[RMDB]
RNA sequence: GGGAACGACUCGAGUAGAGUCGAAAAUUUGAGCGUCAUACGUGGGCCAGAGCCAUAUUGGACAUCUUAGUGCCCUUACAGGAAUAGUCAUAUUGAUACUUUUUCUGUGGGUCGGUAGUUCAGAUAGCACUCUCCAGGCAUUCGUGCCUGGAGAGUGAAAAGAAACAACAACAACAAC
Reactivity to 2A3 in 0.01 (KOAc 150mM, MgCl2 10mM, bicine 150mM(pH8.5), 24C), signal-to-noise 4, nucleotides 027 to 126: u150u070u120g050a100g040c040g050u080c040a020u030a130c090g030u110g000g010g010c000c010a030g010a040g040c020c010a070u110a140u100u170g040g040a030c020a090u050c040u030u060a050g020u060g090c000c000c000u000u010a000c000a000g000g040a050a010u070a020g010u030c130a040u120a160u230u260g120a080u100a100c000u000u000u000u010u030c000u000g040u000g000g020g000u000c030g000g050u040a060g030u030u020c020a030g020a120u110a020g020
Reactivity to DMS in 0.01 (KOAc 150mM, MgCl2 10mM, bicine 150mM(pH8.5), 24C), signal-to-noise 2, nucleotides 027 to 126: u000u010u040g000a050g010c040g010u020c020a050u040a080c110g000u040g000g010g000c020c080a020g040a070g020c020c050a050u020a110u040u060g020g000a040c000a140u000c010u010u060a050g000u040g030c020c000c000u000u040a040c040a010g020g000a000a000u000a010g020u000c140a060u020a170u000u000g000a080u030a020c040u000u000u000u000u000c000u000g010u000g000g000g010u000c040g000g030u000a130g020u000u000c020a090g030a100u010a100g060
Structure probing data (2A3 and DMS) for a 177-nucleotide construct.
The reactions ran in a buffer of 150 mM KOAc, 10 mM MgCl2 and 150 mM bicine (pH 8.5), at 24 C.
The 2A3 profile rests on 1,825 reads.
Reactivities are given for positions 27 through 126.